The record gives the reactivity of an RNA of 207 nucleotides to DMS and 2A3. For DMS the reverse transcriptase was MarathonRT. The 2A3 profile rests on 4,619 reads. The DMS profile rests on 3,165 reads. The RNA was probed in 150 mM KOAc, 10 mM MgCl2 and 150 mM bicine (pH 8.5) at 24 C. For 2A3 the reverse transcriptase was SuperScript II with manganese. Reactivities are given for positions 27 through 156.

[RMDB]
RNA sequence: GGGAACGACUCGAGUAGAGUCGAAAAUAGCAGGACAUAGCCGUUAUGCGCGAAGCGGUGUAGCGUCACUUUGAUGGCGGUACUAUGAAUUGAUGCAAGGUGCGGAGCGACCUUAAACAGUUCUGGUUUGACGGCUUUCAGUUCGCUGAAAGCCGAAACUAUUGGGGUGAUUCGUCACCCCAAUAGUAAAAGAAACAACAACAACAAC
Reactivity to DMS in 0.01 (KOAc 150mM, MgCl2 10mM, bicine 150mM(pH8.5), 24C), signal-to-noise 2, nucleotides 027 to 156: u010a090g030c060a040g020g020a170c010a100u000a130g030c010c020g060u000u000a040u020g030c010g010c010g020a100a080g030c020g030g020u020g030u000a080g030c030g050u000c000a040c060u000u000u000g020a130u000g010g050c030g010g060u000a070c030u000a080u020g000a080a160u000u010g000a180u000g000c120a100a020g000g040u010g020c030g000g000a070g040c040g010a070c030c010u000u000a080a060a050c030a090g020u000u000c010u000g000g010u000u000u000g010a170c010g010g010c000u000u000u000c000a010g010u000u000c300g000c050u000g000a020a010a040g010c020c000g000a000a020
Reactivity to 2A3 in 0.01 (KOAc 150mM, MgCl2 10mM, bicine 150mM(pH8.5), 24C), signal-to-noise 5, nucleotides 027 to 156: u120a000g030c040a020g020g020a040c020a050u070a010g020c010c000g030u070u070a060u190g060c060g010c040g040a030a020g040c050g060g000u050g020u070a030g050c010g030u050c020a030c140u240u190u230g160a210u070g040g000c020g010g060u030a030c020u020a020u110g040a070a060u100u050g060a060u060g040c030a020a030g010g000u010g030c070g010g000a010g000c010g010a010c000c020u080u150a090a020a000c020a020g010u020u000c010u040g080g050u030u050u120g070a040c010g000g000c000u000u010u000c010a000g000u020u110c160g010c100u000g000a000a000a000g000c000c000g000a010a000